[RMDB]
RNA sequence: GGGAACGACUCGAGUAGAGUCGAAAAAGCUAUAUUACGAUAUAGCAACAGUAGCACUUAUAGGAACUGUCUGGAGUGACCACGAAAGUGGUAAUUUUGCCAUUAUUUAAAAGACUACAAGGGCAAAAUUCCAACUGGACUUCGGUCCAGUUGGAAUAAAAGAAACAACAACAACAAC
Reactivity to DMS in 0.01 (KOAc 150mM, MgCl2 10mM, bicine 150mM(pH8.5), 24C), signal-to-noise 1, nucleotides 027 to 126: a090g010c000u020a010u000a000u000u030a160c090g000a020u000a000u000a000g000c000a170a080c070a090g000u020a120g000c010a080c050u000u000a120u020a050g010g010a060a060c020u010g020u000c060u030g000g020a100g000u020g010a020c040c030a000c020g010a020a100a150g010u010g020g020u010a070a010u000u000u000u030g000c000c000a090u000u080a090u030u020u000a000a080a100a050g000a130c120u030a000c110a190a050g030g030g000c020a000a010a010
Reactivity to 2A3 in 0.01 (KOAc 150mM, MgCl2 10mM, bicine 150mM(pH8.5), 24C), signal-to-noise 2, nucleotides 027 to 126: a000g000c000u000a000u000a000u060u060a000c110g020a020u000a000u000a000g040c000a010a010c060a000g000u190a010g110c060a050c180u190u080a120u180a220g130g000a210a140c050u110g070u060c020u030g020g000a130g120u000g020a000c010c000a000c050g040a030a050a000g060u000g000g000u020a040a110u000u130u030u040g100c000c020a060u130u080a010u060u300u230a060a220a100a090g020a040c020u020a110c180a050a140g000g030g000c000a000a010a000

Structure probing data (DMS and 2A3) for a 177-nucleotide construct. For DMS the reverse transcriptase was MarathonRT. The RNA was probed in 150 mM KOAc, 10 mM MgCl2 and 150 mM bicine (pH 8.5) at 24 C. 2A3 adducts were read by reverse transcription with SuperScript II with manganese. Source: RMDB library RFM100, as collected in RNAgym.